[RMDB]
RNA sequence: GGGAACGACUCGAGUAGAGUCGAAAAACACAGACGAAGGGCGCGGGCGCGUCGCGACAGCAGGGCGGUGGCCAUAGAGGUCGGCACCCGCUAAGAACCGUGUUGCAACGUACCUGCCGAACACGCCCGCCCCGAAAAUGGACGGUGCUCAGCGCAGGACUUAUACGCGGUUCGCCGCGUAUAAGUCAAAAGAAACAACAACAACAAC
Reactivity to 2A3 in 0.01 (KOAc 150mM, MgCl2 10mM, bicine 150mM(pH8.5), 24C), signal-to-noise 2, nucleotides 027 to 156: a000c080a010c020a020g090a060c070g040a140a130g040g000g000c090g000c000g030g000g000c000g000c010g010u030c020g020c020g110a020c060a020g040c020a030g030g000g000c010g030g030u100g010g020c010c020a020u050a060g230a070g070g020u020c000g010g000c020a090c000c020c060g020c020u040a020a050g060a070a080c020c020g030u040g030u130u190g000c030a060a040c030g030u070a280c000c000u000g010c000c010g010a030a020c020a000c010g000c000c000c000g000c010c000c000c010g010a000a000a000a000u070g010g010a010c010g020g010u070g000c000u010c060a010g010c010g000c100a030g040
Reactivity to DMS in 0.01 (KOAc 150mM, MgCl2 10mM, bicine 150mM(pH8.5), 24C), signal-to-noise 1, nucleotides 027 to 156: a070c030a070c030a100g010a100c040g000a140a160g000g010g000c050g050c040g030g050g010c010g040c060g030u000c030g000c050g000a120c100a050g010c060a140g040g050g010c000g000g030u000g030g050c000c010a210u000a070g020a190g000g040u000c000g000g000c000a110c130c000c000g040c040u010a080a080g000a070a120c020c030g050u000g030u000u010g020c020a070a040c000g000u000a070c070c010u000g010c010c000g000a040a030c000a020c030g000c010c000c000g040c000c010c020c020g000a020a030a090a090u000g000g010a100c030g020g000u000g000c040u000c070a080g030c100g010c030a060g010